[RMDB]
RNA sequence: GGGAACGACUCGAGUAGAGUCGAAAAAUCUUUGAAUACAUGGUGAGCCCAUGUGUCUGGUUUUAUUCUGAGUGUCAGGGCUACAGCCAUUCUCAUCAGUUUCUGAACUGCAAGUUCAGCUACAGGCACCCUCCUGCGACUAGAGCUCCUAGGAGCACGUAAAUAGUGGGUUCGCCCACUAUUUACGAAAAGAAACAACAACAACAAC
Reactivity to 2A3 in 0.01 (KOAc 150mM, MgCl2 10mM, bicine 150mM(pH8.5), 24C), signal-to-noise 4, nucleotides 027 to 156: a000u080c080u050u090u120g060a100a040u090a040c030a030u020g010g030u090g110a110g060c020c030c010a040u030g020u010g010u000c020u020g020g050u080u030u060u020a140u110u070c050u050g070a040g050u080g090u130c090a060g000g030g020c020u060a100c050a020g020c000c000a060u110u040c040u020c050a190u040c040a030g020u010u100u050c030u010g000a020a010c010u110g120c220a210a070g000u000u010c010a010g000c040u080a060c020a030g040g010c010a010c020c000c000u040c000c000u030g000c010g020a020c010u030a020g000a050g080c010u060c030c000u020a050g060g000a020g010c030a010
Reactivity to DMS in 0.01 (KOAc 150mM, MgCl2 10mM, bicine 150mM(pH8.5), 24C), signal-to-noise 2, nucleotides 027 to 156: a060u000c020u000u000u000g010a120a070u000a040c030a030u000g020g000u020g020a260g020c140c010c020a050u010g000u020g010u000c030u000g040g020u000u000u000u000a100u030u000c030u000g020a080g010u010g020u010c040a140g010g020g000c040u000a070c030a090g010c020c030a120u000u010c020u020c020a100u010c050a070g010u000u010u000c060u010g020a060a040c030u010g000c120a060a140g040u000u000c030a060g040c040u010a030c020a050g000g010c050a090c030c040c020u000c020c050u000g000c040g010a060c060u000a040g010a170g000c020u000c010c040u010a150g040g010a040g030c020a160

The data come from the RNA Mapping Database (RMDB), library OK3TST. An RNA of 207 nucleotides, treated with 2A3 and DMS and read out base by base. 2A3 adducts were read by reverse transcription with SuperScript II with manganese.